An RNA of 177 nucleotides, treated with DMS and read out base by base.
Conditions: 150 mM KOAc, 10 mM MgCl2 and 150 mM bicine (pH 8.5), 24 C.
[RMDB]
RNA sequence: GGGAACGACUCGAGUAGAGUCGAAAAGAUAUGGAUGCAGGGAGCCGUAGAGAUUACCAGACUAUUGAUUCGGAAACGAAUCAACGAAUCUGCGUAAUCUCUACGGCGAAGAACUGCAUCCUAAGUCGUUAUACCUAUUCUUCGGAAUAGGUAUAACAAAAGAAACAACAACAACAAC
Reactivity to DMS in 0.01 (KOAc 150mM, MgCl2 10mM, bicine 150mM(pH8.5), 24C), signal-to-noise 5, nucleotides 027 to 126: g000a110u010a300u000g000g000a000u000g010c010a010g000g000g020a180g020c000c010g050u000a000g010a010g000a010u000u000a010c000c010a020g000a030c110u010a300u000u000g000a010u000u000c000g000g010a150a140a260c000g000a020a020u000c000a000a010c090g010a060a140u000c010u010g010c290g000u000a010a010u000c000u000c000u000a000c000g010g000c000g000a010a070g000a120a180c000u010g000c000a000u000c000c000u000a010a130g010u000c120